[RMDB]
The record gives the reactivity of an RNA of 207 nucleotides to 2A3 and DMS. For DMS the reverse transcriptase was MarathonRT. 2A3 adducts were read by reverse transcription with SuperScript II with manganese. The RNA was probed in 150 mM KOAc, 10 mM MgCl2 and 150 mM bicine (pH 8.5) at 24 C.

RNA sequence: GGGAACGACUCGAGUAGAGUCGAAAAACGAUAACGAGGCGCUCGCUAUUGCUGCGUAACUGACGGCCUGACGGUCUGACGUUACAAAGCUAAAGCGCGGUUGGACCCCUCCGGGCAACAGAAGGGGAAAGGCGACCCCGUUUCGACGGGGUCGCAAUCUCAUAACAAUGUUCGCAUUGUUAUGAGAAAAAGAAACAACAACAACAAC
Reactivity to 2A3 in 0.01 (KOAc 150mM, MgCl2 10mM, bicine 150mM(pH8.5), 24C), signal-to-noise 1, nucleotides 027 to 156: a000c090g000a100u120a020a060c060g000a040g120g030c030g000c070u120c130g000c100u150a120u280u260g020c000u000g000c000g000u030a000a030c040u040g020a010c010g000g000c030c060u140g110a080c190g000g030u010c020u040g030a020c000g020u000u000a010c000a000a000a000g000c000u000a070a000a000g000c000g000c020g000g010u060u020g010g010a030c000c040c000c020u040c040c010g070g100g040c040a160a020c020a090g060a100a020g040g020g030g060a020a010a060g040g010c070g000a030c010c000c000c000g000u010u090u040c060g020a030c000g020g060g020g000u010c010g030c000a000a020
Reactivity to DMS in 0.01 (KOAc 150mM, MgCl2 10mM, bicine 150mM(pH8.5), 24C), signal-to-noise 1, nucleotides 027 to 156: a110c000g000a110u010a060a130c010g040a110g100g040c000g020c040u020c000g080c060u000a190u000u010g060c000u030g010c300g000u040a060a010c030u000g070a300c300g030g000c000c010u000g010a150c300g090g030u000c030u040g010a300c300g040u020u000a080c070a070a300a010g000c020u040a050a040a090g020c020g020c050g000g010u000u000g010g000a150c000c000c000c020u030c020c000g050g060g050c190a090a120c040a050g030a060a030g050g000g000g030a030a010a160g000g010c030g060a090c030c000c000c000g000u000u000u000c280g010a080c000g000g000g050g060u000c020g000c000a000a050